[RMDB]
RNA sequence: GGGAACGACUCGAGUAGAGUCGAAAAGCUAUAAUCCUGAGGGAACAUGGGAAGGAAUCAAAGGUAAAGCCCAUUCAGGCAUUAUUGACAAGAGGGCUUUAAACAAGUGAAUAAUUGCACAACUAAAAAGACAUUAGAACUGUGUGGGCUAUAAGUAGAUUAUACCGUGAUUCGUCACGGUAUAAUCAAAAGAAACAACAACAACAAC
Reactivity to 2A3 in 0.01 (KOAc 150mM, MgCl2 10mM, bicine 150mM(pH8.5), 24C), signal-to-noise 4, nucleotides 027 to 156: g020c030u080a020u070a170a070u100c010c010u020g010a080g020g030g020a070a020c010a090u090g040g000g000a030a030g020g030a060a010u040c040a080a030a040g030g010u080a100a050a000g000c000c000c010a010u070u050c020a000g030g000c010a010u030u100a020u090u150g070a020c030a050a030g020a080g070g010g010c000u030u090u110a050a060a020c020a060a030g020u020g130a030a040u060a060a040u090u180g010c010a030c020a140a090c020u060a050a050a030a030a010g060a010c030a020u030u080a020g020a120a040c030u000g000u010g000u010g090g000g010c000u050a030u040a230a020g100u110a030
Reactivity to DMS in 0.01 (KOAc 150mM, MgCl2 10mM, bicine 150mM(pH8.5), 24C), signal-to-noise 2, nucleotides 027 to 156: g030c070u000a100u010a140a110u000c030c030u010g010a120g020g010g000a090a090c090a060u020g010g000g010a110a060g000g010a090a060u000c090a070a110a100g050g010u000a040a040a090g020c000c000c030a120u020u000c080a090g020g020c050a070u010u000a070u000u000g000a050c050a060a270g010a110g030g000g010c030u000u010u000a010a030a060c060a040a110g000u000g000a080a060u000a030a070u010u020g020c040a090c030a040a080c040u020a030a040a070a060a120g000a170c050a050u000u000a090g010a060a090c030u000g000u010g020u000g010g000g030c030u020a080u000a030a050g020u000a080